Structure probing data (DMS and 2A3) for a 177-nucleotide construct. DMS (dimethyl sulfate) methylates the pairing face of unpaired adenines and cytosines. The reactions ran in a buffer of 150 mM KOAc, 10 mM MgCl2 and 150 mM bicine (pH 8.5), at 24 C. For DMS, 5,058 sequencing reads were counted. It was measured as part of the RMDB library 15KREP.
RNA sequence: GGGAACGACUCGAGUAGAGUCGAAAACAGGGAAUGCUAUCCAAGGGUUUGCCUGUGGAUGUGGGGCAUCAUAUACAGCUAAUGAUGUCGAAGUCCAAUCAUCUGGCAUGAUUAAGCCAAAUGCUCUAGAUAUGCAAUAGUUCGCUAUUGCAUAUCUAAAAGAAACAACAACAACAAC
Reactivity to DMS in 0.01 (KOAc 150mM, MgCl2 10mM, bicine 150mM(pH8.5), 24C), signal-to-noise 5, nucleotides 027 to 126: c060a060g000g010g000a080a020u000g000c030u000a080u010c130c150a110a100g000g010g000u000u000u000g020c020c010u000g010u000g000g000a080u000g010u000g000g010g010g000c020a010u000c000a020u000a130u000a090c210a120g000c140u010a090a040u000g000a020u000g000u000c010g020a140a220g020u000c030c030a110a110u010c050a030u000c050u010g000g000c020a060u010g000a110u010u000a080a080g000c020c020a030a040a050u010g000c200u000c100u000
Reactivity to 2A3 in 0.01 (KOAc 150mM, MgCl2 10mM, bicine 150mM(pH8.5), 24C), signal-to-noise 6, nucleotides 027 to 126: c020a010g020g010g060a050a060u100g090c010u030a060u110c060c040a060a060g080g000g000u040u050u090g220c000c010u060g030u040g040g020a020u050g060u100g050g150g010g000c000a000u000c010a000u090a010u040a080c080a020g060c050u110a120a010u020g010a000u010g000u010c010g020a060a000g030u000c020c000a010a040u040c020a010u030c030u030g000g000c010a020u070g030a170u260u140a080a020g000c000c000a020a030a030u060g010c010u030c020u040